[RMDB]
RNA sequence: GGGAACGACUCGAGUAGAGUCGAAAAGAUAUGGAGUCACGCAAUGAUGCUGCGUAACAUCAAUCGGAAACGAUUGUGGCAGUUGAGCGUCCUUCCUAAGUCAGAGUACAGGGUUCGCCCUGUACAACAAGCUCAUUCUCUUCGGAGAAUGAGCUUGAAAAGAAACAACAACAACAAC
Reactivity to 2A3 in 0.01 (KOAc 150mM, MgCl2 10mM, bicine 150mM(pH8.5), 24C), signal-to-noise 1, nucleotides 027 to 126: g080a050u130a000u280g020g000a040g050u050c030a020c000g030c010a040a300u290g040a040u150g030c010u020g030c020g110u150a060a090c070a260u300c000a020a000u010c000g000g050a080a090a020c010g000a010u030u020g000u030g050g000c000a000g000u040u080g050a010g000c010g010u030c000c000u120u120c000c050u060a130a030g030u070c080a020g040a010g230u000a000c000a000g000g010g000u030u020c060g150c000c000c000u020g000u020a000c000a000a000
Reactivity to DMS in 0.01 (KOAc 150mM, MgCl2 10mM, bicine 150mM(pH8.5), 24C), signal-to-noise 2, nucleotides 027 to 126: g010a060u010a300u000g010g030a010g020u030c140a040c000g020c010a130a170u000g010a120u010g000c000u000g000c000g010u010a040a110c170a000u010c010a010a000u000c000g000g000a060a110a210c000g000a010u000u020g020u010g010g020c000a010g000u000u000g000a090g010c020g020u010c060c030u000u000c000c100u000a070a150g010u010c050a120g010a240g000u000a000c000a000g010g000g030u000u000c250g000c000c000c000u000g000u010a000c010a110a170
Conditions: 150 mM KOAc, 10 mM MgCl2 and 150 mM bicine (pH 8.5), 24 C. Chemical mapping of a 177-nucleotide RNA with 2A3 and DMS. For 2A3, 1,632 sequencing reads were counted. Source: RMDB library TTRDEL, as collected in RNAgym. Values are in units of 0.01, from 0 to 300, in steps of 10. DMS adducts were read by reverse transcription with MarathonRT. 2A3 adducts were read by reverse transcription with SuperScript II with manganese.